[RMDB]
RNA sequence: GGGAACGACUCGAGUAGAGUCGAAAAUAACGAGGUGGUAUCCGAGAGAAUUGUGUGAUUGCUUUAAUUAAUUUCGGAGAAUCUCACAUGCCACUGAAGAUUAAAAACUGGAUGCCAGAAAAGGGGAGGAUAGCAUCUAUUUCGAUAGAUGCUAUCCAAAAGAAACAACAACAACAAC
Reactivity to DMS in 0.01 (KOAc 150mM, MgCl2 10mM, bicine 150mM(pH8.5), 24C), signal-to-noise 5, nucleotides 027 to 126: u040a120a100c130g000a200g000g000u000g000g040u000a010u000c020c030g030a090g000a080g030a080a170u010u000g010u000g000u010g010a000u000u010g000c010u000u010u020a060a060u030u010a080a180u010u010u010c130g000g000a000g000a030a000u000c010u000c010a000c010a030u000g020c300c020a040c040u000g030a100a070g000a160u020u050a070a080a060a120a110c100u020g000g000a030u000g000c010c000a100g000a010a020a060a030g000g000g020g020a210
Reactivity to 2A3 in 0.01 (KOAc 150mM, MgCl2 10mM, bicine 150mM(pH8.5), 24C), signal-to-noise 6, nucleotides 027 to 126: u200a040a050c100g010a050g020g120u050g010g000u020a020u030c020c070g040a020g000a010g070a140a150u100u030g000u000g000u010g030a040u030u060g240c020u060u010u070a060a080u060u230a080a120u090u160u150c090g060g000a020g010a000a000u000c010u000c010a000c000a000u040g010c020c020a060c080u110g090a060a020g040a070u120u270a070a040a110a000a010c020u010g000g020a030u070g020c010c010a020g060a060a040a020a040g010g010g020g000a080
Description
Structure probing data (DMS and 2A3) for a 177-nucleotide construct. Conditions: 150 mM KOAc, 10 mM MgCl2 and 150 mM bicine (pH 8.5), 24 C. Source: RMDB library OK1LIB, as collected in RNAgym.